This 207-nucleotide RNA was probed chemically with 2A3 and DMS.
In probing experiments dimethyl sulfate is read out at A N1 and C N3, which are open when not base-paired.
The RNA was probed in 150 mM KOAc, 10 mM MgCl2 and 150 mM bicine (pH 8.5) at 24 C.

[RMDB]
RNA sequence: GGGAACGACUCGAGUAGAGUCGAAAAGCGGGCAGUCCAGGGCGAGAUGUGAGAAGUCCGUCUUGUACCUGGUACGGCAAUGGUAGGCGAGGGUGCUUAACGCUAACCCGUCUCUUGUGCUCCUAUCGCUGAAGGGGAGUUUCAUCCAGCACAGCAAGUAAAGUAUACACUUCGGUGUAUACUUUACAAAAGAAACAACAACAACAAC
Reactivity to 2A3 in 0.01 (KOAc 150mM, MgCl2 10mM, bicine 150mM(pH8.5), 24C), signal-to-noise 9, nucleotides 027 to 156: g060c040g040g030g000c030a020g030u000c010c000a010g010g000g000c010g010a010g010a020u100g110u280g080a050g050a180a060g190u030c010c010g000u000c000u000u000g010u140a300c000c010u000g000g010u030a000c000g020g010c010a030a110u140g070g030u100a030g000g030c020g050a170g020g030g000u060g010c020u130u140a150a000c090g000c030u040a080a110c000c010c010g040u000c010u010c010u060u090g050u060g050c000u020c020c010u090a100u140c060g020c070u040g040a090a060g020g010g010g010a040g000u020u080u070c020a060u020c030c010a010g050c060a040c010a040g040c050a150a010
Reactivity to DMS in 0.01 (KOAc 150mM, MgCl2 10mM, bicine 150mM(pH8.5), 24C), signal-to-noise 3, nucleotides 027 to 156: g010c050g000g030g050c020a170g020u000c000c020a030g000g000g010c010g010a030g010a020u000g000u000g030a050g010a200a230g000u000c020c010g040u000c040u020u000g010u000a100c000c040u010g020g010u000a030c050g010g020c040a080a060u000g030g030u010a080g000g020c040g020a100g010g020g000u010g010c020u000u000a060a100c120g000c030u010a190a160c020c010c010g010u000c020u000c050u000u000g010u000g000c000u000c010c020u000a090u000c070g000c050u010g000a090a140g000g010g020g020a040g040u000u000u000c020a110u000c020c010a090g010c040a090c040a070g020c060a090a270